[RMDB]
RNA sequence: GGGAACGACUCGAGUAGAGUCGAAAACCUCCUACCUUCGGGUAGGAGGAAAGCACGCGCAACGUAAGCGACAACCAAGUCAACGCGAACGAACGUAAAUAAAAACGCAGGGCUUCGGCCCUGCGAAGUUACUUAAAGUGUUCGCACUUUAAGUAACAAAAGAAACAACAACAACAAC
Reactivity to DMS in 0.01 (KOAc 150mM, MgCl2 10mM, bicine 150mM(pH8.5), 24C), signal-to-noise 3, nucleotides 027 to 126: c000c000u000c000c000u000a000c000c000u000u000c210g020g030g030u000a000g000g000a010g000g000a020a010a070g000c110a040c100g020c020g000c060a060a070c060g050u000a040a140g020c020g000a080c090a070a180c080c110a110a090g010u000c040a090a130c040g000c010g030a080a040c110g010a120a070c040g000u020a060a090a080u010a030a070a090a100a130c020g010c000a030g000g000g010c000u000u020c140g010g010c000c000c000u000g010c000g010a010a030
Reactivity to 2A3 in 0.01 (KOAc 150mM, MgCl2 10mM, bicine 150mM(pH8.5), 24C), signal-to-noise 4, nucleotides 027 to 126: c000c000u000c000c000u010a000c000c000u050u080c230g140g000g000u000a000g000g000a000g000g000a000a000a030g010c020a020c090g060c000g020c050a060a110c080g070u090a050a050g020c010g040a050c010a070a040c060c040a080a030g060u070c040a060a040c040g000c010g040a080a010c030g040a060a010c030g040u110a040a140a090u150a050a110a120a020a000c010g000c000a000g000g000g000c000u060u140c230g070g000c000c000c010u000g000c000g000a000a000
Structure probing data (DMS and 2A3) for a 177-nucleotide construct.
For DMS the reverse transcriptase was MarathonRT.
The reactions ran in a buffer of 150 mM KOAc, 10 mM MgCl2 and 150 mM bicine (pH 8.5), at 24 C.